[RMDB]
Conditions: 150 mM KOAc, 10 mM MgCl2 and 150 mM bicine (pH 8.5), 24 C. An RNA of 177 nucleotides, treated with DMS and 2A3 and read out base by base. The 2A3 profile rests on 4,330 reads. For DMS the reverse transcriptase was MarathonRT.
RNA sequence: GGGAACGACUCGAGUAGAGUCGAAAAAUCGCUUUUGGUCAAUAUGAGGAAGCGAAAAUACGUGACGGCAAAAAUUAUCUCGUACUUUUUUCGAGCUAUGACAAUUUACCAAAUGAUCUAAAAUUACCAUUACUCAGCACUUCGGUGCUGAGUAAUGAAAAGAAACAACAACAACAAC
Reactivity to DMS in 0.01 (KOAc 150mM, MgCl2 10mM, bicine 150mM(pH8.5), 24C), signal-to-noise 2, nucleotides 027 to 126: a030u060c010g010c040u020u000u010u000g000g020u000c040a180a080u000a190u020g020a280g010g000a050a010g070c040g010a010a000a000a050u000a020c100g000u010g000a000c050g020g000c250a000a030a110a090a040u090u020a090u000c060u010c000g000u000a080c230u000u000u030u030u020u000c040g000a060g000c050u020a080u010g010a110c120a070a090u000u020u000a090c000c030a010a000a020u020g010a080u040c050u010a040a020a000a050u010u060a030c060
Reactivity to 2A3 in 0.01 (KOAc 150mM, MgCl2 10mM, bicine 150mM(pH8.5), 24C), signal-to-noise 6, nucleotides 027 to 126: a000u050c040g010c040u030u020u030u070g060g010u040c030a060a060u080a270u270g060a070g110g060a090a010g020c000g020a040a000a000a000u070a020c070g030u090g070a010c000g020g080c150a060a050a010a080a080u210u090a120u070c050u040c020g030u040a070c080u070u070u050u000u010u030c030g040a060g020c030u050a060u140g050a050c010a030a030u040u030u010a020c000c000a010a030a070u070g040a050u100c060u210a120a050a060a100u110u110a060c010